[RMDB]
RNA sequence: GGGAACGACUCGAGUAGAGUCGAAAAGUCUUGGAAGCGGCGCGGCGCGUGGGCGCCUACAACCUGAGGCGCUCCCCCAAGCUGACCCGGGCCGGGCAGGCGCUGAUGCAUGCCCGCGUGAGCCGCCUGGUGCGCAGCGCGCGCCGCCGAAAAAGAACCAUUUCUUGUGAUUCGUCACAAGAAAUGGAAAAGAAACAACAACAACAAC
Reactivity to 2A3 in 0.01 (KOAc 150mM, MgCl2 10mM, bicine 150mM(pH8.5), 24C), signal-to-noise 2, nucleotides 027 to 156: g020u000c000u030u020g020g020a000a030g000c010g000g030c010g000c000g040g040c020g040c140g030u100g000g000g010c000g000c020c010u040a100c020a170a180c060c220u190g050a020g010g000c000g010c000u040c040c040c000c000c000a040a080g000c000u000g010a010c000c000c000g000g000g000c010c020g020g000g000c000a010g010g020c030g070c170u260g070a130u300g000c000a010u020g000c000c060c010g030c010g150u150g110a100g020c040c020g000c050c010u020g010g050u200g000c050g000c010a020g000c020g000c000g010c000g010c000c000g000c000c000g020a010a020a000a000a000g010a020a020